[RMDB]
RNA sequence: GGGAACGACUCGAGUAGAGUCGAAAAAUGUUUCUCUUCCUAAUAAUCGCAGGUCCUUCAAUGGACAUUAUCUGCCAUUAUCAGUCGAAGAUCGAACGUUUAACCAAUAAUGUUCUUCAGAAUAUUUAAUUUAACAUCGGUUCGCCGAUGUUAAAUUAAAAGAAACAACAACAACAAC
Reactivity to 2A3 in 0.01 (KOAc 150mM, MgCl2 10mM, bicine 150mM(pH8.5), 24C), signal-to-noise 2, nucleotides 027 to 126: a000u060g010u000u050u050c030u000c000u000u000c000c000u020a030a000u000a000a000u000c000g000c010a030g000g070u030c000c000u190u240c220a210a300u280g000g000a000c020a000u030u060a060u060c000u000g000c000c000a000u000u030a000u000c030a000g030u140c100g050a000a000g010a020u120c140g020a010a070c000g000u000u020u060a080a000c010c040a050a000u280a100a090u100g050u090u020c040u160u190c090a080g130a230a090u110a090u130u010u010
Reactivity to DMS in 0.01 (KOAc 150mM, MgCl2 10mM, bicine 150mM(pH8.5), 24C), signal-to-noise 1, nucleotides 027 to 126: a010u000g000u000u000u000c180u000c000u000u000c010c030u040a010a010u010a000a010u000c300g000c010a040g020g010u000c000c010u000u030c300a190a110u000g030g000a020c000a160u000u000a160u080c000u000g000c010c060a030u000u000a030u000c010a010g000u060c090g000a000a000g000a000u040c170g000a030a000c010g040u000u000u000a060a240c040c020a070a070u030a120a040u010g020u000u000c040u000u030c110a150g030a060a090u000a070u010u000u010